[RMDB]
RNA sequence: GGGAACGACUCGAGUAGAGUCGAAAAAAGAAGUUAGAGCUUACCUAGGAAUCUCUUCUGCUUGUGACGGUCUUGCUUCAGCUUAUAGGGCGAAUUCCUUUGAUGUACCUACAUUCUGCGCAAACCGCCUCAUACCAGUCUUCGGACUGGUAUGAGGAAAAGAAACAACAACAACAAC
Reactivity to DMS in 0.01 (KOAc 150mM, MgCl2 10mM, bicine 150mM(pH8.5), 24C), signal-to-noise 1, nucleotides 027 to 126: a040a070g000a070a050g030u000u000a080g000a040g020c060u000u010a100c090c050u000a110g030g010a100a070u000c020u000c030u000u000c030u000g010c100u010u030g000u000g010a230c010g000g010u000c180u000u020g000c000u000u000c010a070g010c060u030u000a060u000a000g000g000g000c040g010a040a070u000u000c070c120u020u010u010g000a110u020g020u000a050c040c030u000a050c030a030u000u000c010u000g030c300g010c080a010a020a090c080c040g000